This 177-nucleotide RNA was probed chemically with DMS and 2A3. The RNA was probed in 150 mM KOAc, 10 mM MgCl2 and 150 mM bicine (pH 8.5) at 24 C.
[RMDB]
RNA sequence: GGGAACGACUCGAGUAGAGUCGAAAAGCUGGCACGUUCGCGUGCCAGCAAAGCACCCUGUCCCCGGUAGGGAACCAAAUAAAAUAAAACUAACAAAAUAAAAAAGUGCACACUUCGGUGUGCACAACAGUAUUAUCUGGUUCGCCAGAUAAUACUGAAAAGAAACAACAACAACAAC
Reactivity to DMS in 0.01 (KOAc 150mM, MgCl2 10mM, bicine 150mM(pH8.5), 24C), signal-to-noise 1, nucleotides 027 to 126: g000c000u000g000g000c060a000c010g000u000u020c220g090c000g050u000g010c010c010a030g040c020a000a000a170g010c130a070c110c010c050u030g010u000c020c010c020c130g000g000u020a120g000g000g010a080a040c070c160a140a020a130u050a110a060a080a130u000a070a060a010a140c030u000a050a050c050a040a170a030a170u000a010a030a070a140a090a050g000u010g010c000a000c000a000c000u000u000c200g030g010u000g000u000g010c010a000c000a000a110
Reactivity to 2A3 in 0.01 (KOAc 150mM, MgCl2 10mM, bicine 150mM(pH8.5), 24C), signal-to-noise 2, nucleotides 027 to 126: g000c000u000g020g050c010a020c040g060u100u120c260g020c010g090u010g020c010c000a000g010c000a000a000a000g010c020a000c000c010c030u020g080u030c040c010c000c000g060g090u150a120g090g020g010a060a040c030c010a160a060a090u270a150a180a060a030u210a140a140a010a000c030u290a010a100c040a070a230a160a140u300a150a150a050a040a040a060g010u000g000c000a000c010a010c010u050u080c200g070g020u000g010u010g000c010a000c000a000a000